[RMDB]
RNA sequence: GGGAACGACUCGAGUAGAGUCGAAAAAAUUAAAGAUCCUAAUUGUAUAGCAUUCAUAGGUGAAGGAGCAGGGAAUUUAUUGUUGCGUACAGUAGUGGAACUUCAUCCUGAUAUAAAAUAUAUUUACUAUGAUAUGUUAGUUCGCUAACAUAUCAUAAAAAGAAACAACAACAACAAC
Reactivity to DMS in 0.01 (KOAc 150mM, MgCl2 10mM, bicine 150mM(pH8.5), 24C), signal-to-noise 1, nucleotides 027 to 126: a070a030u010u000a090a020a030g000a080u020c000c000u000a160a030u010u000g040u000a020u010a110g030c080a030u010u000c090a020u010a080g000g010u000g000a110a060g010g000a080g000c090a070g010g000g010a070a010u010u010u000a050u040u010g040u000u000g030c060g030u010a090c050a000g010u010a080g030u020g020g020a080a070c000u000u000c080a020u000c000c010u000g000a080u050a160u010a050a090a060a160u000a250u050a130u000u010u010a210c010
An RNA of 177 nucleotides, treated with DMS and read out base by base.